[RMDB]
RNA sequence: GGGAACGACUCGAGUAGAGUCGAAAAUUGAGAAUUUAUUUAAAAUUUGCGUUAUAGGCACUUGCGCAUGUAAUCUAACAAAGUAAUCGCUUAAUGGGCGUGCAUUGCCGUGCGGCAACUUUACACGGUUGCUACCGUGUUUACGGCUGUAUACUAAAAAUGGCAUUGAUUUCGAUCAAUGCCAUUUAAAAGAAACAACAACAACAAC
Reactivity to DMS in 0.01 (KOAc 150mM, MgCl2 10mM, bicine 150mM(pH8.5), 24C), signal-to-noise 2, nucleotides 027 to 156: u010u010g020a250g000a090a080u000u000u010a090u010u000u000a130a070a040a100u010u000u020g010c030g010u000u000a050u010a050g000g030c030a050c100u000u020g000c110g000c020a040u010g020u020a030a050u000c070u020a100a090c050a070a050a100g040u000a060a070u020c010g050c010u000u010a050a090u000g000g020g020c020g010u000g000c090a090u000u000g000c010c060g050u010g020c120g010g000c030a040a020c160u010u000u000a080c060a070c070g030g020u000u020g000c130u000a070c010c020g000u000g000u000u000u010a050c060g010g010c060u000g040u010a080u000a140c140u000a010a050
Reactivity to 2A3 in 0.01 (KOAc 150mM, MgCl2 10mM, bicine 150mM(pH8.5), 24C), signal-to-noise 1, nucleotides 027 to 156: u090u030g030a000g040a000a090u070u160u110a260u040u150u160a260a220a130a090u070u140u020g000c000g030u050u000a150u080a190g030g000c050a000c010u030u080g000c060g000c000a050u020g000u040a130a000u070c050u070a150a030c030a070a080a040g060u070a110a050u080c010g020c080u050u090a090a020u130g050g010g000c030g000u050g000c000a020u000u200g020c000c000g010u000g000c030g020g010c020a000a080c030u090u130u080a020c050a000c060g000g030u020u050g080c000u050a050c000c020g040u060g020u090u020u010a010c000g020g010c000u030g040u110a100u020a030c020u000a000a170
The record gives the reactivity of an RNA of 207 nucleotides to DMS and 2A3. Source: RMDB library OK3TST, as collected in RNAgym. 2A3 adducts were read by reverse transcription with SuperScript II with manganese.